[RMDB]
RNA sequence: GGGAACGACUCGAGUAGAGUCGAAAAGACCACCUCCAGAGGACCCCUUCAGCGAACAGAAGAGCUCCCUCCUCCGGAGAGAGAAGACCAUAGCGAUAGGGGGAGAUGCUAGGAGUAGGAGGCGACCGCACAUCCACCUUCGGGUGGAUGAAAAGAAACAACAACAACAAC
Reactivity to 2A3 in 0.01 (KOAc 150mM, MgCl2 10mM, bicine 150mM(pH8.5), 24C), signal-to-noise 8, nucleotides 027 to 129: g030a030c000c000a020c020c010u020c020c010a030g010a050g080g040a050c010c000c000c000u030u060c060a050g020c010g080a090a080c040a110g120a150a020g040a090g030c010u010c010c010c000u010c010c000u120c040c120g040g000a020g000a000g000a000g010a070a020g040a030c020c030a100u100a040g030c020g080a070u120a110g000g000g010g010g000a020g000a000u090g020c030u050a050g000g030a020g040u040a020g010g060a010g010g010c050g020a020c000c020g040c000a030
Reactivity to DMS in 0.01 (KOAc 150mM, MgCl2 10mM, bicine 150mM(pH8.5), 24C), signal-to-noise 7, nucleotides 027 to 129: g000a210c050c030a130c110c010u030c020c030a040g000a060g050g000a170c110c030c030c020u000u000c060a160g020c080g040a140a070c150a000g020a130a110g010a100g000c040u000c020c040c020u010c030c030u050c100c180g000g050a060g040a040g030a060g010a070a060g000a100c090c030a060u000a060g030c020g040a130u000a030g020g040g000g040g010a040g010a050u120g030c060u070a070g000g000a050g000u040a070g040g000a080g020g000c010g030a060c110c050g030c090a210